[RMDB]
RNA sequence: GGGAACGACUCGAGUAGAGUCGAAAAAAGGUUGUGGCUGUAAUAAGAUAAAAGAUUGCCUAGGUAAGGGUAGAUGUUAUCUCAAUGACAUAAAAUACUCCUUCAGUCACAGGCAAGUUUUAGUGGCCUUGUUACUAGUUUUCGAACUAGUAACAAGAAAAGAAACAACAACAACAAC
Reactivity to DMS in 0.01 (KOAc 150mM, MgCl2 10mM, bicine 150mM(pH8.5), 24C), signal-to-noise 8, nucleotides 027 to 126: a080a080g010g010u000u000g020u000g010g020c020u010g010u000a070a080u010a100a120g010a120u000a030a040a040a040g000a150u000u000g000c000c010u000a110g020g010u010a040a040g010g000g010u000a010g010a060u000g000u000u000a020u000c270u020c280a100a080u000g010a010c020a020u010a070a070a150a120u000a020c040u020c010c020u000u000c060a090g010u000c160a080c150a020g000g000c030a030a020g000u000u000u000u000a060g010u000g010g010c160
Reactivity to 2A3 in 0.01 (KOAc 150mM, MgCl2 10mM, bicine 150mM(pH8.5), 24C), signal-to-noise 5, nucleotides 027 to 126: a000a010g100g000u040u020g010u030g040g000c030u020g020u050a070a080u090a170a090g080a090u100a060a080a020a010g130a240u000u060g000c010c010u040a060g020g090u110a030a010g020g010g000u010a020g010a090u020g020u030u010a050u020c160u000c150a110a090u060g000a000c000a010u080a060a260a040a010u040a030c080u170c030c010u010u020c020a090g070u070c040a040c010a080g020g010c000a020a040g000u000u020u060u070a080g020u130g050g020c000

Source information:
An RNA of 177 nucleotides, treated with DMS and 2A3 and read out base by base. The data come from the RNA Mapping Database (RMDB), library OK2TRN. DMS adducts were read by reverse transcription with MarathonRT. The 2A3 profile rests on 6,749 reads. The DMS profile rests on 11,584 reads. The reactions ran in a buffer of 150 mM KOAc, 10 mM MgCl2 and 150 mM bicine (pH 8.5), at 24 C.